[RMDB]
RNA sequence: GGGAACGACUCGAGUAGAGUCGAAAAAGCCAUACCAUUACGAUGCUAUGGCAAGUCCGUGACGGCGAUGGAUCCCGCCUGGCCGAUGCCGAACUGCCGAUCUGGCUGAUGGUUCCUGCCCCGUCAAAAAACGUAAAGCACUUCGGUGCUUUACGAACCAACAAUUCGAGUUCGCUCGAAUUGUUGGAAAAGAAACAACAACAACAAC
Reactivity to 2A3 in 0.01 (KOAc 150mM, MgCl2 10mM, bicine 150mM(pH8.5), 24C), signal-to-noise 5, nucleotides 027 to 156: a000g010c010c000a010u020a040c090c000a020u050u070a060c210g110a020u020g000c000u010a000u010g010g000c030a030a010g050u000c010c020g030u020g000a000c000g000g050c120g020a020u050g000g010a010u020c000c010c020g010c010c040u020g010g000c010c020g040a050u130g100c050c060g140a190a110c110u110g050c020c030g060a090u040c060u120g000g000c030u050g040a110u140g020g010u010u010c000c000u020g020c020c000c000c000g000u000c020a030a050a060a040a030a000c010g000u000a000a000a000g010c000a000c020u040u100c190g090g000u000g000c000u000u000u010a000c000g000a000a010
Reactivity to DMS in 0.01 (KOAc 150mM, MgCl2 10mM, bicine 150mM(pH8.5), 24C), signal-to-noise 1, nucleotides 027 to 156: a130g020c010c000a070u000a000c040c010a040u020u000a110c200g030a110u020g010c110u000a000u010g010g040c020a050a080g020u000c050c040g030u000g010a060c030g030g000c030g010a170u010g000g000a060u000c030c000c050g070c040c020u000g030g000c030c100g020a130u000g000c000c020g000a070a100c090u000g020c010c020g000a060u000c060u000g030g000c010u000g020a100u000g030g010u000u000c010c020u020g020c030c080c010c030g000u010c000a010a010a070a040a060a110c020g000u000a000a010a030g010c010a010c010u000u040c300g040g000u000g000c000u000u000u000a000c020g010a050a110